RNA sequence: GGGAACGACUCGAGUAGAGUCGAAAAACGGGCAACGGUAGGUCAGUAUGCCCCGAAUGUGCUGGGCGACACGCGGGCUACAAUGGCCGAGACAGUGGGAUGCAACGCCGAAAGGCGACGCUAAUCUAUACUACCCAUUGUUCGCAAUGGGUAGUAUAAAAGAAACAACAACAACAAC
Reactivity to DMS in 0.01 (KOAc 150mM, MgCl2 10mM, bicine 150mM(pH8.5), 24C), signal-to-noise 6, nucleotides 027 to 126: a120c100g010g000g010c060a070a070c080g010g000u000a110g020g010u000c020a070g010u020a030u020g030c100c000c000c050g000a100a060u040g020u010g010c050u020g000g010g010c040g000a150c040a050c100g010c100g000g000g000c020u000a060c070a070a080u010g000g000c000c000g010a170g000a060c100a060g030u000g010g000g000a110u020g010c020a080a300c010g000c000c000g000a070a130a140g010g020c010g000a030c300g000c030u030a060a070u040c080u010
Reactivity to 2A3 in 0.01 (KOAc 150mM, MgCl2 10mM, bicine 150mM(pH8.5), 24C), signal-to-noise 6, nucleotides 027 to 126: a000c060g010g020g020c050a050a020c040g050g070u080a030g010g030u050c010a000g020u050a060u170g000c020c000c000c000g050a140a130u220g010u010g040c050u130g000g070g010c060g020a020c010a000c040g060c060g000g000g000c000u010a000c040a070a200u070g020g000c000c010g000a010g010a000c010a010g030u080g010g030g010a010u070g000c010a050a040c010g000c000c000g020a070a030a010g010g000c010g000a010c020g010c020u070a030a020u030c020u030
An RNA of 177 nucleotides, treated with DMS and 2A3 and read out base by base. 2A3 adducts were read by reverse transcription with SuperScript II with manganese. The 2A3 profile rests on 7,279 reads. Values cover nucleotides 27 to 126.